RNA sequence: GGGAACGACUCGAGUAGAGUCGAAAAUGUGUUGGACACAAUUGUCAAGAUCAAACAGGUAAAUACAUGUUAUGUCAGAAUCUUCCUCGAUUAAUCCGAUCGCUGAUAUCUGGAUAUAGCACCGUACAACAAUCUUCAUCACCCAUUCAAUCGAGGCGUGUAGCCGUUAAUUCGUUAACGGCUACACAAAAGAAACAACAACAACAAC
Reactivity to 2A3 in 0.01 (KOAc 150mM, MgCl2 10mM, bicine 150mM(pH8.5), 24C), signal-to-noise 5, nucleotides 027 to 156: u090g010u000g000u030u150g050g040a020c030a030c040a190a120u100u070g050u060c040a050a050g020a070u060c070a050a100a090c060a070g040g070u100a070a110a030u110a050c060a050u050g030u060u120a020u050g020u030c010a000g010a080a080u030c050u100u060c010c010u030c020g010a020u020u150a140a060u090c070c120g020a020u020c070g000c080u010g000a020u000a070u060c030u080g070g040a020u040a010u010a080g000c020a030c080c050g060u120a030c020a040a010c010a020a080u020c030u090u060c040a060u050c030a090c020c040c020a020u170u110c060a030a060u070c040g030a010g050g000c070
Reactivity to DMS in 0.01 (KOAc 150mM, MgCl2 10mM, bicine 150mM(pH8.5), 24C), signal-to-noise 2, nucleotides 027 to 156: u000g020u010g020u010u000g010g000a190c030a070c060a040a110u010u000g030u020c050a090a110g040a080u010c040a100a110a070c040a080g020g020u020a070a090a060u000a070c040a090u010g010u010u000a060u010g010u000c020a090g020a100a120u000c040u010u010c000c020u000c010g050a050u000u010a050a100u010c130c070g010a040u000c030g010c100u000g060a040u000a070u000c000u000g020g020a020u000a020u000a070g000c040a040c080c150g010u010a030c060a100a090c060a060a050u010c040u000u000c030a080u000c020a080c020c000c030a140u000u000c070a050a100u010c040g020a030g000g040c250
About this RNA: Structure probing data (2A3 and DMS) for a 207-nucleotide construct. Values cover nucleotides 27 to 156. The DMS profile rests on 4,114 reads. For 2A3, 2,746 sequencing reads were counted. The data come from the RNA Mapping Database (RMDB), library OK3TST.